This 207-nucleotide RNA was probed chemically with 2A3. For 2A3, 619 sequencing reads were counted.

RNA sequence: GGGAACGACUCGAGUAGAGUCGAAAAGGGGCCGUUCAGAGAGUCGUGCGGCAAGCACUACUAUUCUGGCGUAGAUGUUACUCCCUUUUACAUACGUCACCGUAUAGUGAGUCCUGCCGAUUUAAUACUGGUUUUGAAUAACCUAUAUCGGUGGGCCGACUGAGAGUGUGUUCGCACACUCUCAGUCAAAAGAAACAACAACAACAAC
Reactivity to 2A3 in 0.01 (KOAc 150mM, MgCl2 10mM, bicine 150mM(pH8.5), 24C), signal-to-noise 2, nucleotides 027 to 156: g020g040g000g010c050c030g050u150u220c070a010g020a000g000a000g000u050c040g000u020g010c050g140g150c130a040a040g000c000a000c000u000a010c000u110a240u170u000c000u010g040g000c000g000u010a040g010a130u270g080u250u170a070c100u120c000c000c000u020u000u000u090a050c040a050u160a010c030g070u050c220a070c180c130g060u110a090u010a070g060u040g110a040g010u030c000c000u000g000c000c000g000a020u100u000u240a230a120u100a170c120u080g020g040u000u000u090u130g160a180a230u150a080a000c000c000u000a020u010a000u050c010g000g000u010g000g010g000c040c000
The RNA was probed in 150 mM KOAc, 10 mM MgCl2 and 150 mM bicine (pH 8.5) at 24 C.